This 177-nucleotide RNA was probed chemically with 2A3 and DMS. Reactivities are rounded to 0.1 and cut off at 0 and 3. The 2A3 profile rests on 1,070 reads. 2A3 adducts were read by reverse transcription with SuperScript II with manganese.

RNA sequence: GGGAACGACUCGAGUAGAGUCGAAAAUGGUUGAGGCAGGGUUCUGAUCUCGAGCUAUUAUAUUUGUGGAAGUGAGUAGCACUGCCCAGUAACCUGAUUGACUUGAUAGCAAACUGGUUAGAAUUGCCGUAAACGACAGUUUCGACUGUCGUUUACGAAAAGAAACAACAACAACAAC
Reactivity to 2A3 in 0.01 (KOAc 150mM, MgCl2 10mM, bicine 150mM(pH8.5), 24C), signal-to-noise 1, nucleotides 027 to 126: u080g060g020u120u100g070a120g060g000c030a010g000g020g060u090u100c050u070g020a040u000c020u020c010g030a020g000c050u000a000u260u110a120u180a080u160u240u150g060u020g020g020a040a040g020u020g030a030g000u050a000g000c010a000c030u000g050c000c000c000a020g060u030a020a050c010c010u000g050a200u070u000g000a010c010u020u130g080a060u160a060g000c030a050a000a050c040u040g080g000u050u010a060g040a150a100u090u110g000c000
Reactivity to DMS in 0.01 (KOAc 150mM, MgCl2 10mM, bicine 150mM(pH8.5), 24C), signal-to-noise 4, nucleotides 027 to 126: u000g000g010u020u000g020a110g030g020c020a030g000g010g000u000u020c040u000g000a120u000c000u000c030g010a300g010c010u000a030u000u010a130u010a120u010u000u000g030u000g010g000a130a020g010u000g000a300g010u000a040g010c030a060c040u000g030c010c020c040a090g010u010a040a060c070c040u000g000a140u000u010g010a050c050u000u000g010a120u020a050g000c040a030a040a110c070u010g000g000u000u000a060g000a070a110u010u000g000c130